[RMDB]
RNA sequence: GGGAACGACUCGAGUAGAGUCGAAAACGGUUGGGAUUGCGUUCUGUAAUGGACGCAUGAACCAGGAAUUCCUAGUAGUCGCGUGUCACUAACGGGCGACGACUGCGUCCCUGUUCUUUGUACACACUUUGGGACAAAACUUCGGUUUUGUCCCAAAAAAAGAAACAACAACAACAAC
Reactivity to DMS in 0.01 (KOAc 150mM, MgCl2 10mM, bicine 150mM(pH8.5), 24C), signal-to-noise 2, nucleotides 027 to 126: c130g030g040u000u000g000g010g000a080u040u010g000c010g020u000u000c000u010g000u000a070a070u040g000g000a000c020g000c000a000u000g000a220a130c020c020a050g000g000a090a150u000u000c000c000u000a070g010u010a030g010u010c050g010c050g000u000g010u010c060a080c170u030a020a030c070g020g000g000c070g000a010c000g000a040c060u000g000c050g000u000c000c030c000u010g000u000u000c030u020u000u040g010u040a050c040a050c150a100c080
Reactivity to 2A3 in 0.01 (KOAc 150mM, MgCl2 10mM, bicine 150mM(pH8.5), 24C), signal-to-noise 1, nucleotides 027 to 126: c000g170g020u090u080g040g040g000a020u110u000g000c000g000u020u000c000u000g210u100a130a120u230g060g000a000c000g000c010a000u000g020a020a020c000c020a060g040g010a030a120u030u020c020c000u000a030g110u030a000g000u050c060g000c120g090u020g020u100c080a090c090u090a110a000c030g000g040g060c030g000a000c000g000a000c100u090g030c030g020u030c000c000c000u020g090u040u030c060u030u000u030g030u200a020c020a000c000a000c040

Chemical mapping of a 177-nucleotide RNA with DMS and 2A3.
Source: RMDB library RFM100, as collected in RNAgym.
The reactions ran in a buffer of 150 mM KOAc, 10 mM MgCl2 and 150 mM bicine (pH 8.5), at 24 C.